[RMDB]
RNA sequence: GGGAACGACUCGAGUAGAGUCGAAAACGCAUAAAAGAAGUUUAUGUAGACAAUCUUUCUCUAAAAGAUGGCGGUCGUAAUAACCAUGCACAAAGAACUGUGGGAGGAGAGGAUAGAUUACCAGACGUGGUGUAUGAGAGUUCGCUCUCAUACACCAAAAAGAAACAACAACAACAAC
Reactivity to DMS in 0.01 (KOAc 150mM, MgCl2 10mM, bicine 150mM(pH8.5), 24C), signal-to-noise 3, nucleotides 027 to 126: c130g000c010a020u010a020a050a070a170g050a100a210g000u010u000u000a000u010g000u010a140g030a120c080a100a070u030c050u000u010u000c040u010c040u060a070a070a050a080g000a060u010g020g030c140g000g000u000c060g000u000a110a040u020a070a080c050c060a050u010g010c050a020c050a060a120a070g000a050a050c100u030g010u010g010g010g000a030g010g020a070g020a060g010g020a050u020a050g010a060u030u010a100c030c030a110g000a090c180g020
Reactivity to 2A3 in 0.01 (KOAc 150mM, MgCl2 10mM, bicine 150mM(pH8.5), 24C), signal-to-noise 3, nucleotides 027 to 126: c000g000c000a000u000a020a030a000a000g300a150a090g040u040u000u000a090u010g030u010a050g070a070c050a050a060u000c010u090u130u000c050u000c000u050a050a040a000a000g050a020u010g100g010c060g000g070u040c030g010u020a000a090u180a050a050c010c040a010u150g020c030a030c020a040a150a050g070a210a070c100u090g000u040g000g050g080a100g030g030a080g000a020g090g000a010u020a060g080a050u020u210a130c010c000a000g000a100c070g060

The record gives the reactivity of an RNA of 177 nucleotides to DMS and 2A3. The 2A3 profile rests on 1,304 reads. Source: RMDB library OK1LIB, as collected in RNAgym. Values cover nucleotides 27 to 126. Conditions: 150 mM KOAc, 10 mM MgCl2 and 150 mM bicine (pH 8.5), 24 C. For DMS, 4,442 sequencing reads were counted. 2A3 adducts were read by reverse transcription with SuperScript II with manganese. Values are in units of 0.01, from 0 to 300, in steps of 10.